Chemical mapping of a 177-nucleotide RNA with 2A3 and DMS. For DMS the reverse transcriptase was MarathonRT. It was measured as part of the RMDB library OK1LIB. For 2A3, 640 sequencing reads were counted. The RNA was probed in 150 mM KOAc, 10 mM MgCl2 and 150 mM bicine (pH 8.5) at 24 C.
RNA sequence: GGGAACGACUCGAGUAGAGUCGAAAAGUGAAGCUGGCGGUGAUCGGUAUGUGAAUCGGGAUAUUCACGUCGACGCUCACAAUCGGGAUUUCGGGAAUGUCGACGCCGAUGGCGAGGUCGAUCAGACUGGGGCAUUUAGUUUCGACUAAAUGCCCCAAAAAGAAACAACAACAACAAC
Reactivity to 2A3 in 0.01 (KOAc 150mM, MgCl2 10mM, bicine 150mM(pH8.5), 24C), signal-to-noise 1, nucleotides 027 to 126: g110u110g000a030a080g040c010u040g030g010c020g000g000u040g000a110u010c000g000g000u240a180u300g070u030g000a120a080u040c060g030g000g000a020u050a110u160u110c080a000c030g060u020c000g040a000c020g060c070u070c000a010c040a030a170u140c020g000g070g060a120u050u180u000c030g010g000g010a090a130u060g040u060c000g010a030c010g040c040c000g000a020u000g010g000c010g000a030g110g000u000c020g030a050u070c000a030g060a110c080
Reactivity to DMS in 0.01 (KOAc 150mM, MgCl2 10mM, bicine 150mM(pH8.5), 24C), signal-to-noise 2, nucleotides 027 to 126: g000u020g010a040a110g030c050u020g010g020c080g000g000u060g020a010u000c080g040g030u100a040u040g000u000g000a060a040u000c110g060g110g010a060u040a020u030u000c070a070c020g000u000c000g060a020c020g050c080u000c010a060c210a110a090u000c120g010g000g000a150u000u030u010c090g020g000g010a060a000u030g030u030c000g040a000c130g000c000c010g020a070u030g000g000c040g010a200g000g000u000c030g000a100u020c060a020g000a110c200